[RMDB]
Overview:
Structure probing data (2A3 and DMS) for a 177-nucleotide construct. Source: RMDB library TTRDES, as collected in RNAgym. The reactions ran in a buffer of 150 mM KOAc, 10 mM MgCl2 and 150 mM bicine (pH 8.5), at 24 C. For 2A3 the reverse transcriptase was SuperScript II with manganese. The DMS profile rests on 2,382 reads.
RNA sequence: GGGAACGACUCGAGUAGAGUCGAAAAGAUAUGGAUCGAUACAGGGAGUCCUGUGUCGGAAACGACAUCUAAGGACGACGAUCUGUGAUCGAUCCUAAGUCAAACUAGAAGAGUUCGCUCUUCUAGACCUAUUGGGUUUCUUCGGAAACCCAAUAGGAAAAGAAACAACAACAACAAC
Reactivity to 2A3 in 0.01 (KOAc 150mM, MgCl2 10mM, bicine 150mM(pH8.5), 24C), signal-to-noise 2, nucleotides 027 to 126: g000a010u070a030u160g000g000a000u000c000g000a010u010a070c000a000g030g000g010a050g040u000c030c000u000g030u020g000u030c000g000g020a020a030a000c000g020a000c000a010u060c120u300a130a040g040g010a000c080g150a130c050g030a060u000c000u000g040u070g150a050u030c030g000a000u000c010c010u010a040a000g030u020c020a020a070a100c010u000a010g000a030a000g030a020g040u120u200c300g130c140u000c000u020u010c000u000a000g000a010
Reactivity to DMS in 0.01 (KOAc 150mM, MgCl2 10mM, bicine 150mM(pH8.5), 24C), signal-to-noise 2, nucleotides 027 to 126: g020a040u010a300u020g020g000a000u000c000g000a020u000a020c000a020g000g000g000a090g020u000c000c000u000g010u000g020u010c000g020g000a090a080a230c010g010a010c000a000u010c300u000a160a040g010g000a010c010g010a150c300g010a070u010c000u000g000u010g000a020u000c010g000a020u000c010c000u000a020a100g010u000c010a080a080a280c010u010a030g000a000a020g010a000g000u010u040c300g030c000u000c000u000u000c000u000a000g000a130